[RMDB]
RNA sequence: GGGAACGACUCGAGUAGAGUCGAAAACUCUAGUUUCGACUAGAGCGAUCGGGGUCACGAGAGGGACAUGCGUAAUACUGAAGCCUCCACGGUAUUGACGCAACAGCCUCCCCACCUCGUGACGGAGGCACCCACUAUAUGCUAGUUCGCUAGCAAAGUAUUCGGUUGAGUUCGCUCAACCGAAUACAAAAGAAACAACAACAACAAC
Reactivity to 2A3 in 0.01 (KOAc 150mM, MgCl2 10mM, bicine 150mM(pH8.5), 24C), signal-to-noise 2, nucleotides 027 to 156: c030u030c010u000a020g000u000u190u090c240g110a020c030u000a000g010a020g000c000g030a060u200c230g070g100g000g000u010c000a000c020g000a000g010a040g050g000g000a090c110a190u170g000c010g020u000a000a000u000a030c000u000g000a140a000g000c000c000u000c000c000a000c000g000g000u010a040u010u070g180a030c000g060c030a040a210c010a170g190c010c050u150c060c000c000c000a060c020c000u010c000g010u010g010a000c030g000g000a000g000g000c000a020c020c020c000a030c040u250a150u060a030u230g020c000u000a030g000u110u030c210g050c190u000a030g000c000a000a000a000